[RMDB]
RNA sequence: GGGAACGACUCGAGUAGAGUCGAAAAGACGGAAAAGAUCGAACCUAAGAACAUCAGGAAGUGUGACCCGAAUCCUAGGGCUCCUAGGCACGCAUCGUCCGAUGCGAAAUAAACACUAACGUCGAAAACCUGGACGAGGAUUCGUCCUCGUCCAGGUAAAAGAAACAACAACAACAAC
Reactivity to DMS in 0.01 (KOAc 150mM, MgCl2 10mM, bicine 150mM(pH8.5), 24C), signal-to-noise 2, nucleotides 027 to 126: g000a000c020g000g000a020a110a110a120g000a100u010c150g020a030a120c120c060u000a050a180g000a050a070c110a050u020c000a030g000g000a060a070g000u000g000u000g000a040c000c000c090g000a120a030u030c000c030u000a010g000g000g000c140u100c020c050u000a000g000g000c300a290c040g050c020a030u000c010g000u040c130c190g000a000u000g030c010g000a000a000a010u080a080a070a100c080a010c020u040a120a160c040g010u000c020g000a010a040a050
Reactivity to 2A3 in 0.01 (KOAc 150mM, MgCl2 10mM, bicine 150mM(pH8.5), 24C), signal-to-noise 2, nucleotides 027 to 126: g010a020c030g010g050a130a020a000a030g040a080u050c060g010a060a020c000c000u000a060a000g100a110a060c080a060u240c030a000g100g020a060a010g040u030g000u030g080a120c000c000c010g000a060a050u030c010c010u000a000g000g020g030c050u110c100c060u040a000g070g010c000a000c140g000c040a000u010c050g260u080c140c180g000a000u000g000c020g030a120a000a070u120a060a110a000c000a000c040u060a140a000c040g030u020c030g020a130a020a000

Source: RMDB library OK1LIB, as collected in RNAgym. An RNA of 177 nucleotides, treated with DMS and 2A3 and read out base by base. Reactivities are given for positions 27 through 126. For DMS, 1,418 sequencing reads were counted. For DMS the reverse transcriptase was MarathonRT.